RNA sequence: GGGAACGACUCGAGUAGAGUCGAAAAGAUAUGGAGCCGAGGUCUGAACUACCCUAAUAAUCGGAAACGAUUAUGAGGGCAGACUAUCUCCUAAGUCAAAACCAGAGCAACUUCGGUUGCUCUGGAAGUCAACGUUAUUGUUCGCAAUAACGUUGACAAAAGAAACAACAACAACAAC
Reactivity to 2A3 in 0.01 (KOAc 150mM, MgCl2 10mM, bicine 150mM(pH8.5), 24C), signal-to-noise 2, nucleotides 027 to 126: g060a030u060a010u110g010g020a050g090c230c300g300a240g030g130u020c000u010g040a110a130c050u160a130c300c010c000u010a070a020u000a010a000u020c020g020g000a050a020a030c000g010a000u000u000a000u030g050a000g000g000g000c010a000g000a010c000u020a050u000c020u000c000c000u040a200a030g060u040c030a000a020a030a160c000c010a000g000a000g000c000a010a010c010u100u160c300g200g000u040u010g000c000u020c000u010g010g000a000a000
Reactivity to DMS in 0.01 (KOAc 150mM, MgCl2 10mM, bicine 150mM(pH8.5), 24C), signal-to-noise 2, nucleotides 027 to 126: g010a020u000a300u000g010g000a030g010c300c110g010a100g010g000u000c000u010g000a080a030c120u040a300c000c000c000u000a040a010u000a000a000u000c000g010g000a060a110a110c000g010a000u010u000a000u000g010a040g000g000g000c000a010g000a020c000u000a200u000c010u000c000c000u010a030a130g010u000c020a080a100a170a190c000c000a000g010a000g000c000a000a010c000u000u000c160g020g040u000u000g000c000u000c000u000g000g000a010a070